[RMDB]
RNA sequence: GGGAACGACUCGAGUAGAGUCGAAAAGGUACAACGUUCGCGUUGUACCAAAUAAGGCAACCUUCGUGGUGAGGAGAAUAAAUGAGUGCUCGCCCUCAUAAAAAACAAUCCCCUUCGGGGGAUUGAAGAGACAAUAUGUCUUCGGACAUAUUGUCUCAAAAGAAACAACAACAACAAC
Reactivity to DMS in 0.01 (KOAc 150mM, MgCl2 10mM, bicine 150mM(pH8.5), 24C), signal-to-noise 1, nucleotides 027 to 126: g000g040u030a010c000a000a000c010g030u000u020c190g020c000g000u010u010g020u010a010c010c000a000a030a070u000a070a110g040g000c040a020a020c010c040u020u000c100g010u000g010g000u000g020a070g010g000a090g030a060a050u010a070a100a030u000g000a060g030u010g020c050u000c070g030c030c060c000u010c080a100u030a000a040a100a160a130a080c010a000a000u000c000c000c000c010u000u010c190g020g050g000g000g000a000u010u010g000a060a140
Reactivity to 2A3 in 0.01 (KOAc 150mM, MgCl2 10mM, bicine 150mM(pH8.5), 24C), signal-to-noise 2, nucleotides 027 to 126: g000g010u000a000c000a030a000c020g000u040u040c200g000c000g120u020u000g000u010a010c000c000a000a000a000u070a030a000g040g000c000a050a020c020c000u120u160c130g090u120g070g010u080g050a040g050g030a080g040a090a130u180a210a160a080u120g030a040g080u040g070c020u030c060g060c020c030c020u030c020a070u170a050a140a020a040a020a030c000a000a010u000c000c000c000c000u000u000c120g050g000g000g010g000a000u000u000g000a000a020